[RMDB]
RNA sequence: GGGAACGACUCGAGUAGAGUCGAAAAAGUCACCUAUUACGAUAGGUGACAUUUGGACCAGCGAACAAUUCAGUUGCGAGAUUCGAGGUUUCAGUCUGAAUCAUAGUAGCCAUUACGAUGGCUACAACUCACUCCCGACUGUUCGCAGUCGGGAGAAGGUAAGAAAUAUGUUCGCAUAUUUCUUACCAAAAGAAACAACAACAACAAC
Reactivity to DMS in 0.01 (KOAc 150mM, MgCl2 10mM, bicine 150mM(pH8.5), 24C), signal-to-noise 1, nucleotides 027 to 156: a110g000u000c010a000c010c010u000a010u000u000a160c220g030a160u000a010g040g010u000g010a020c000a030u000u000u000g010g010a200c070c040a070g000c070g030a050a040c060a140a030u000u010c090a040g030u010u010g000c020g030a160g010a060u000u000c030g020a160g010g010u000u000u000c040a170g000u010c020u000g010a010a060u030c160a060u020a200g010u010a020g010c000c010a020u000u000a150c210g000a080u000g050g010c000u000a000c000a030a020c090u030c070a080c010u000c000c010c000g020a020c010u000g010u000u000c300g030c010a040g000u000c010g030g000g030a000g000a000a000
Reactivity to 2A3 in 0.01 (KOAc 150mM, MgCl2 10mM, bicine 150mM(pH8.5), 24C), signal-to-noise 5, nucleotides 027 to 156: a000g010u010c010a000c000c000u010a010u020u070a080c270g060a030u010a010g000g000u000g000a000c000a010u060u060u070g050g060a020c000c010a020g130c010g000a000a000c000a050a110u020u000c000a000g000u010u000g000c000g000a000g010a000u000u000c000g000a030g050g050u090u210u250c040a040g130u060c020u000g030a000a000u050c050a060u070a090g010u000a000g000c010c000a000u050u050a060c240g160a030u030g000g000c000u010a000c000a000a010c010u060c040a040c010u000c000c000c000g000a000c000u010g040u080u100c240g000c100a000g000u000c010g000g010g000a000g010a000a000